Structure probing data (DMS and 2A3) for a 177-nucleotide construct. The reactions ran in a buffer of 150 mM KOAc, 10 mM MgCl2 and 150 mM bicine (pH 8.5), at 24 C. It was measured as part of the RMDB library OK1LIB. DMS adducts were read by reverse transcription with MarathonRT. Reactivities are given for positions 27 through 126.

[RMDB]
RNA sequence: GGGAACGACUCGAGUAGAGUCGAAAACGGCAGUGGCAUGUGAUGCGUACGUUAUGUGCGGACUCGCAUCCUAUAAGCGUAGAUGCGAUGCCCGUAGAUGUGCAAGUGAGUAUCCCUGCUCCUAGCAUCUAGUCUAGGGGUUCGCUCCUAGGCUAGAAAAAGAAACAACAACAACAAC
Reactivity to DMS in 0.01 (KOAc 150mM, MgCl2 10mM, bicine 150mM(pH8.5), 24C), signal-to-noise 9, nucleotides 027 to 126: c140g010g010c030a030g010u020g010g020c050a020u000g010u030g000a050u010g010c130g010u010a040c040g010u010u020a070u020g020u010g000c010g000g000a050c030u000c000g010c000a010u000c090c070u010a060u020a090a160g010c260g020u010a040g000a020u000g000c000g010a020u030g010c030c000c000g020u010a030g000a030u020g020u020g000c030a070a170g010u020g010a090g000u010a070u000c010c000c040u000g000c000u000c060c010u000a090g020c080a110
Reactivity to 2A3 in 0.01 (KOAc 150mM, MgCl2 10mM, bicine 150mM(pH8.5), 24C), signal-to-noise 9, nucleotides 027 to 126: c020g040g000c020a020g030u060g060g010c040a020u050g050u080g060a030u040g010c020g040u060a020c010g020u050u080a060u110g140u040g010c000g000g010a010c000u000c010g000c000a000u020c010c030u130a100u040a160a070g110c090g060u040a020g000a020u010g000c000g000a020u150g020c000c000c000g010u020a050g020a130u100g040u060g060c030a060a060g050u090g170a040g010u040a030u030c010c000c010u000g000c000u010c010c000u010a030g010c010a030